Notes:
Structure probing data (2A3 and DMS) for a 177-nucleotide construct. Reactivities are rounded to 0.1 and cut off at 0 and 3. The DMS profile rests on 3,229 reads. The 2A3 profile rests on 2,825 reads. It was measured as part of the RMDB library OK2TST.
RNA sequence: GGGAACGACUCGAGUAGAGUCGAAAAGGUGCACCUGAUCAACGCGUCGCGUGGCCGUAUCGCGCAACUGCAGCGCUGGCCGGACGGGUUGCAAGCUGCGGUCGAGGCCAAGGAAGGUAUCGAGACCAUUAGGAUCGUCAUUCGUGACGAUCCUAAUAAAAGAAACAACAACAACAAC
Reactivity to 2A3 in 0.01 (KOAc 150mM, MgCl2 10mM, bicine 150mM(pH8.5), 24C), signal-to-noise 3, nucleotides 027 to 126: g100g020u110g020c020a050c010c010u000g010a090u110c010a010a070c010g050c010g300u030c040g020c080g140u270g030g000c020c010g100u130a130u240c090g000c000g000c030a090a110c140u290g030c150a100g020c020g000c070u080g010g000c040c020g000g000a010c000g000g050g010u000u040g000c020a000a000g000c020u090g010c020g030g000u030c020g000a040g000g020c020c020a030a030g210g050a120a090g060g000u050a080u100c030g020a040g030a050c020c010
Reactivity to DMS in 0.01 (KOAc 150mM, MgCl2 10mM, bicine 150mM(pH8.5), 24C), signal-to-noise 4, nucleotides 027 to 126: g050g030u000g010c040a070c040c040u000g000a180u000c020a080a050c030g000c010g000u000c030g010c140g020u020g030g030c030c010g000u010a060u010c170g010c030g020c020a130a150c230u000g020c210a090g030c010g010c060u000g000g010c010c010g000g000a040c020g010g000g020u000u000g010c130a080a080g000c060u000g010c060g010g010u000c040g010a170g020g000c010c020a110a120g020g000a140a110g010g010u010a060u000c030g000a300g000a130c030c080